[RMDB]
RNA sequence: GGGAACGACUCGAGUAGAGUCGAAAAAACAGUGGAGCUUUAAAUAGUCCCAGAAUGUGGCUAUGGAACCACAGCCAAUAAGUCAGUGACUUAAUCAUUCAUUCGACAAGUAUAUAUUGAAUGUCCAUGAUGUCCCAUAAUCCUAGUCUCUGGGGGAGUUUUACUAGCGGUUCGCCGCUAGUAAAACAAAAGAAACAACAACAACAAC
Reactivity to 2A3 in 0.01 (KOAc 150mM, MgCl2 10mM, bicine 150mM(pH8.5), 24C), signal-to-noise 1, nucleotides 027 to 156: a010a010c040a030g020u050g000g100a070g000c100u170u210u130a030a080a080u090a050g090u080c000c000c010a000g100a090a100u170g000u070g010g000c020u020a080u130g030g030a020a060c000c000a030c020a030g060c000c020a040a070u040a090a000g060u070c140a070g040u020g060a000c020u070u080a110a040u020c010a000u260u060c000a000u050u000c070g040a020c040a120a040g120u030a070u030a020u000a020u230u230g020a020a010u030g020u000c020c050a040u040g020a050u120g050u020c010c000c000a020u060a090a030u090c040c000u010a030g010u000c020u010c000u080g030g010g000g070g020a090
The record gives the reactivity of an RNA of 207 nucleotides to 2A3. The RNA was probed in 150 mM KOAc, 10 mM MgCl2 and 150 mM bicine (pH 8.5) at 24 C. As a SHAPE reagent, 2A3 marks flexible, mostly unpaired nucleotides at the ribose 2'-OH. It was measured as part of the RMDB library OK3TST.